[RMDB]
RNA sequence: GGGAACGACUCGAGUAGAGUCGAAAAGAAGCGGAACCCGCCAAGCCGAUCAAGAACGACCCGUUCUAUCCGGAUGUGUCGCUCGGCCACGCGCGCGACACGAUGCGCCUCGACGGGACGGUCACCGCCAGAUAUUGAAGUUCGCUUCAAUAUCUGGAAAAGAAACAACAACAACAAC
Reactivity to DMS in 0.01 (KOAc 150mM, MgCl2 10mM, bicine 150mM(pH8.5), 24C), signal-to-noise 4, nucleotides 027 to 126: g010a100a100g010c030g010g000a060a120c060c000c010g020c050c050a090a100g000c030c030g000a060u010c130a110a090g000a050a050c050g010a110c080c030c030g010u000u000c040u000a070u010c120c050g020g000a080u000g010u010g000u000c000g000c020u010c000g010g000c050c110a050c190g000c040g000c240g000c020g010a000c020a020c020g010a060u000g000c060g010c070c010u000c070g000a050c050g000g010g010a070c040g000g000u010c040a140c070c070g000
Reactivity to 2A3 in 0.01 (KOAc 150mM, MgCl2 10mM, bicine 150mM(pH8.5), 24C), signal-to-noise 4, nucleotides 027 to 126: g020a040a030g050c010g020g030a060a080c040c010c020g000c030c030a050a000g030c020c010g010a050u080c090a110a060g030a080a030c030g070a090c040c020c030g020u070u020c010u040a070u040c040c020g070g030a070u080g010u000g000u010c000g020c010u010c010g070g020c050c050a100c080g110c010g010c000g000c010g020a010c010a000c030g040a050u110g040c030g000c000c020u070c010g020a010c030g000g000g050a030c010g010g020u040c060a030c050c020g020
An RNA of 177 nucleotides, treated with DMS and 2A3 and read out base by base. DMS adducts were read by reverse transcription with MarathonRT. The 2A3 profile rests on 6,556 reads. For DMS, 4,024 sequencing reads were counted. For 2A3 the reverse transcriptase was SuperScript II with manganese.